[RMDB]
Structure probing data (2A3 and DMS) for a 177-nucleotide construct.
RNA sequence: GGGAACGACUCGAGUAGAGUCGAAAAGAUAUGGAACUGAACUACGCUUCAAUGUGACUUGGACCCAUGCAAUUAUCGGAAACGAUAAUUGCAUGGCUAGUCAAUCAAGAGCGCAGUUCCUAAGUCAGUUCAAGUAUUGGUUCGCCAAUACUUGAACAAAAGAAACAACAACAACAAC
Reactivity to 2A3 in 0.01 (KOAc 150mM, MgCl2 10mM, bicine 150mM(pH8.5), 24C), signal-to-noise 4, nucleotides 027 to 126: g020a030u060a030u100g000g000a010a030c010u020g020a190a130c160u170a080c300g000c030u160u160c190a300a300u300g010u050g120a010c020u050u120g100g090a170c050c010c010a000u020g000c000a000a010u010u000a000u000c000g040g000a050a020a040c000g010a010u000a000a010u020u000g000c010a000u000g000g000c000u000a000g010u000c020a010a180u230c090a140a120g000a000g050c030g030c010a000g000u000u000c000c000u000a030a020g040u020c060a010
Reactivity to DMS in 0.01 (KOAc 150mM, MgCl2 10mM, bicine 150mM(pH8.5), 24C), signal-to-noise 3, nucleotides 027 to 126: g020a040u000a300u000g010g010a050a010c010u000g000a140a120c200u020a290c020g030c000u000u010c180a180a180u010g020u000g000a020c000u000u010g010g010a200c300c010c000a010u020g020c000a030a010u000u000a010u000c010g010g000a120a050a130c000g020a010u000a000a010u010u010g020c000a010u000g000g020c040u010a010g000u000c000a050a030u000c290a100a230g010a010g000c030g000c010a000g000u000u000c010c020u000a020a110g030u000c030a160

Source information:
The RNA was probed in 150 mM KOAc, 10 mM MgCl2 and 150 mM bicine (pH 8.5) at 24 C.